[RMDB]
RNA sequence: GGGAACGACUCGAGUAGAGUCGAAAAAGUCUUAUUCAGGCUCAUUCGGGUUGAAGACAUUGUCAGAUGGGGAGUUUGGCUGGGGCGGCACAUCUGUUAAAUAAUAACGCAGGUGUCCUAAGGGGGGAGCACUGAUAUAGUUCGCUAUAUCAGUGCUAAAAGAAACAACAACAACAAC
Reactivity to 2A3 in 0.01 (KOAc 150mM, MgCl2 10mM, bicine 150mM(pH8.5), 24C), signal-to-noise 4, nucleotides 027 to 126: a010g140u040c070u060u130a120u110u130c070a100g000g000c000u000c030a030u000u000c040g030g010g020u000u000g030a030a000g040a010c050a150u080u250g080u120c070a050g080a140u040g000g000g030g040a180g070u070u150u120g100g000c100u030g010g000g010g000c030g010g000c090a000c000a000u000c000u000g040u020u010a050a090a030u260a020a030u120a130a000c050g000c000a010g010g010u000g000u040c010c000u040a070a060g000g000g000g000g000g000
Reactivity to DMS in 0.01 (KOAc 150mM, MgCl2 10mM, bicine 150mM(pH8.5), 24C), signal-to-noise 3, nucleotides 027 to 126: a090g010u060c140u020u030a110u010u010c080a080g040g000c010u000c000a070u030u000c030g020g010g020u000u000g000a060a070g000a090c050a140u010u030g000u000c060a070g020a110u010g010g000g000g010a140g030u010u010u000g020g010c120u010g000g000g010g000c070g000g000c140a010c010a010u010c040u020g020u000u010a020a120a110u050a090a130u030a090a070c300g000c010a000g000g020u010g000u010c030c040u010a040a090g030g000g010g000g000g010